RNA sequence: GGGAACGACUCGAGUAGAGUCGAAAAGUCUUGAGAUUCGUCUCAAGACCACCAUCCUAAGUCUUCCUUAGACAAUGAUCACGAAGAACUAUCGGAAACGAUAGGGAGUAUCAUCGAGGAAGAUAUGGACUAAUCCGAUUACAUUCGUGUAAUCGAAUUAACGCCUACUAUUCGUAGUAGGCGUUAAAAAAGAAACAACAACAACAAC
Reactivity to DMS in 0.01 (KOAc 150mM, MgCl2 10mM, bicine 150mM(pH8.5), 24C), signal-to-noise 2, nucleotides 027 to 156: g000u010c020u000u020g000a010g010a080u000u000c300g030u000c010u020c000a010a010g030a010c000c010a100c040c030a100u000c000c000u000a020a160g020u000c010u000u000c000c020u000u010a030g020a160c170a070a060u010g000a020u000c080a070c050g030a140a080g020a210a180c000u000a010u040c010g020g020a180a130a280c010g000a070u010a060g000g000g010a230g000u000a020u000c050a020u000c090g010a010g000g000a040a010g000a000u000a120u000g010g010a180c170u000a070a070u000c000c000g010a030u000u000a020c000a070u000u000c300g030u010g010u000a020a000u000c000g020a000a020
Reactivity to 2A3 in 0.01 (KOAc 150mM, MgCl2 10mM, bicine 150mM(pH8.5), 24C), signal-to-noise 5, nucleotides 027 to 156: g000u000c000u000u000g000a010g000a020u070u150c250g130u000c070u000c000a000a000g010a000c000c000a040c010c000a060u050c010c000u060a170a080g040u000c010u010u040c000c000u030u060a150g020a090c060a080a070u020g010a000u060c130a020c110g150a300a110g030a070a030c000u000a000u010c000g050g040a150a060a040c000g010a000u010a000g020g000g000a030g010u050a010u000c000a010u000c010g010a000g000g010a000a000g000a000u010a020u020g000g000a000c030u100a070a080u110c060c020g010a000u000u010a010c010a020u020u110c240g050u100g030u060a000a000u050c040g020a020a040
About this RNA:
An RNA of 207 nucleotides, treated with DMS and 2A3 and read out base by base. It was measured as part of the RMDB library RNAMAK. The DMS profile rests on 4,107 reads. Conditions: 150 mM KOAc, 10 mM MgCl2 and 150 mM bicine (pH 8.5), 24 C. For 2A3 the reverse transcriptase was SuperScript II with manganese. Values cover nucleotides 27 to 156. Reactivities are rounded to 0.1 and cut off at 0 and 3.